[RMDB]
RNA sequence: GGGAACGACUCGAGUAGAGUCGAAAAGAUAUGGAGUCUUCCUGGAGGCUAAGACAGGUACAUCGGAAACGAUGUACUCGAGCCUACAGGAGAGACUCCUAAGUCAAAACAGUGCUUCGGCACUGAAGGAUUACUAUUUGUUCGCAAAUAGUAAUCCAAAAGAAACAACAACAACAAC
Reactivity to DMS in 0.01 (KOAc 150mM, MgCl2 10mM, bicine 150mM(pH8.5), 24C), signal-to-noise 7, nucleotides 027 to 126: g010a060u010a300u000g010g010a010g010u000c000u000u010c000c000u000g010g010a030g000g000c010u010a170a110g010a150c300a080g000g000u000a000c000a020u000c000g000g000a150a100a270c010g010a020u000g000u000a010c000u000c050g010a040g000c000c000u000a030c000a020g000g000a040g020a030g000a010c000u000c000c010u000a000a080g010u000c060a080a110a130a240c010a010g000u000g010c000u000u020c190g040g010c000a010c000u000g000a080a100
Reactivity to 2A3 in 0.01 (KOAc 150mM, MgCl2 10mM, bicine 150mM(pH8.5), 24C), signal-to-noise 6, nucleotides 027 to 126: g020a000u090a040u230g000g000a000g000u000c000u020u000c010c000u000g000g030a010g020g000c040u180a300a030g150a140c090a070g060g030u000a000c000a000u010c000g010g020a030a060a050c020g000a000u000g000u000a010c000u000c000g010a000g000c000c000u010a020c000a010g020g000a120g030a010g000a010c000u000c000c000u010a010a010g010u010c020a020a010a120a200c010a010g000u000g020c000u090u170c300g170g000c010a000c010u000g020a060a050